[RMDB]
RNA sequence: GGGAACGACUCGAGUAGAGUCGAAAAGGUUUGUGUGCGCUCUGAUUCUGUUUGCUACUUUGUGCGGGCACACAAUACUUGAGAGGUGGGAAAAUGGAGCGGGGCGAUGCGUGGCCGCGUCUCGCCCCCGAAAAUCCGGGUUCGCCCGGAUUUUCGGAAAAGAAACAACAACAACAAC
Reactivity to DMS in 0.01 (KOAc 150mM, MgCl2 10mM, bicine 150mM(pH8.5), 24C), signal-to-noise 2, nucleotides 027 to 126: g000g010u000u010u000g010u010g000u000g000c010g020c070u000c060u010g010a130u050u020c070u000g000u000u040u020g020c080u000a070c050u000u020u010g000u020g030c100g000g000g000c010a010c000a020c010a020a010u010a030c030u000u000g000a160g010a090g000g000u010g010g000g000a050a070a100a060u020g030g010a140g050c120g000g000g010g010c000g000a020u000g000c010g010u000g000g000c100c070g000c000g000u010c070u000c000g020c000c020c000
Reactivity to 2A3 in 0.01 (KOAc 150mM, MgCl2 10mM, bicine 150mM(pH8.5), 24C), signal-to-noise 4, nucleotides 027 to 126: g020g010u030u060u040g010u010g040u020g020c080g070c070u000c040u080g130a260u220u080c060u120g140u250u240u090g150c060u080a130c030u080u170u160g100u110g060c040g000g050g000c020a020c000a000c000a010a010u130a050c010u050u030g020a010g010a030g080g110u210g050g040g050a020a080a080a110u170g050g020a090g050c050g000g020g000g010c010g010a030u020g010c000g050u040g140g000c070c040g030c020g000u000c000u000c000g000c000c000c000